The record gives the reactivity of an RNA of 207 nucleotides to DMS and 2A3. It was measured as part of the RMDB library OK3TST. The 2A3 profile rests on 548 reads. The DMS profile rests on 1,515 reads. DMS (dimethyl sulfate) methylates the pairing face of unpaired adenines and cytosines. 2A3 is a SHAPE reagent: it acylates the 2'-hydroxyl of flexible nucleotides of all four kinds.

RNA sequence: GGGAACGACUCGAGUAGAGUCGAAAACAGAAAUCAGAAAAGAUCGAAGCUAGCCUUUUCAUCUCAGCUGCUCCUUAAAUCAGUGCAACCCCUCCAAAUUAAUGUGAAUUGAAACUUGCAUUGCUUUUCAACUUAAUUGAAUACUUACUAUAUGUGAACGGUUUUAUUACUUCGGUAAUAAAACCGUAAAAGAAACAACAACAACAAC
Reactivity to DMS in 0.01 (KOAc 150mM, MgCl2 10mM, bicine 150mM(pH8.5), 24C), signal-to-noise 1, nucleotides 027 to 156: c110a180g000a060a080a050u010c070a120g000a150a120a150a080g000a070u000c020g010a150a100g030c010u010a030g030c050c010u020u000u000u000c040a210u000c080u000c060a150g010c090u000g000c010u010c010c010u020u000a060a020a040u000c020a140g070u000g020c080a130a180c000c020c060c020u000c010c020a020a020a040u000u010a080a080u000g020u010g000a020a100u020u000g000a030a060a110c070u000u010g090c030a190u000u000g060c020u040u000u000u000c020a050a130c060u000u000a060a060u000u020g010a020a030u000a030c050u020u000a070c040u000a050u000a070u040g010u000g010a090
Reactivity to 2A3 in 0.01 (KOAc 150mM, MgCl2 10mM, bicine 150mM(pH8.5), 24C), signal-to-noise 1, nucleotides 027 to 156: c010a020g240a040a090a030u170c080a040g070a140a180a050a010g030a030u070c080g070a060a000g000c010u000a000g000c010c000u010u010u010u080c050a200u020c080u010c110a060g000c070u030g000c000u040c000c000u030u010a040a070a050u040c020a060g150u060g160c060a110a250c000c000c020c000u000c000c020a020a020a000u030u020a020a010u040g050u050g070a030a070u000u000g070a010a060a060c030u000u030g000c020a090u000u130g010c030u060u010u020u010c020a000a050c010u030u100a070a060u070u000g000a000a010u000a040c000u020u110a120c020u050a020u140a020u250g050u110g040a000